[RMDB]
RNA sequence: GGGAACGACUCGAGUAGAGUCGAAAACUCUUGCACAGAAUCACCUUUCUAUAAUAACCAGUGCAAGAAGGGUUAUUAUACCAUUUAAUGUGCCGAGGCCACGCGGGGUACGAUCGAGGGUACAGCAAAAACGUGAAGUACUUCGGUACUUCACGAAGGUGUCAACCAAGUUCGCUUGGUUGACACCAAAAGAAACAACAACAACAAC
Reactivity to 2A3 in 0.01 (KOAc 150mM, MgCl2 10mM, bicine 150mM(pH8.5), 24C), signal-to-noise 1, nucleotides 027 to 156: c000u000c000u000u000g130c030a000c000a040g140a060a210u160c070a080c020c030u120u300u280c160u190a090u000a000a020u000a000a000c010c010a010g000u000g010c010a000a010g010a050a020g040g000g000u000u000a000u020u000a020u010a020c010c050a200u170u180u170a300a110u190g040u080g030c000c000g000a010g090g000c000c010a010c000g050c010g030g010g000g160u300a010c020g040a080u010c020g010a050g060g000g000u000a030c030a030g000c010a000a050a000a000a000c000g000u000g000a000a000g000u000a000c000u010u020c140g000g000u000a000c000u000u000c050a000c000g000a000a000
This 207-nucleotide RNA was probed chemically with 2A3.
The reactions ran in a buffer of 150 mM KOAc, 10 mM MgCl2 and 150 mM bicine (pH 8.5), at 24 C.
Reactivities are given for positions 27 through 156.
It was measured as part of the RMDB library M2RFOK.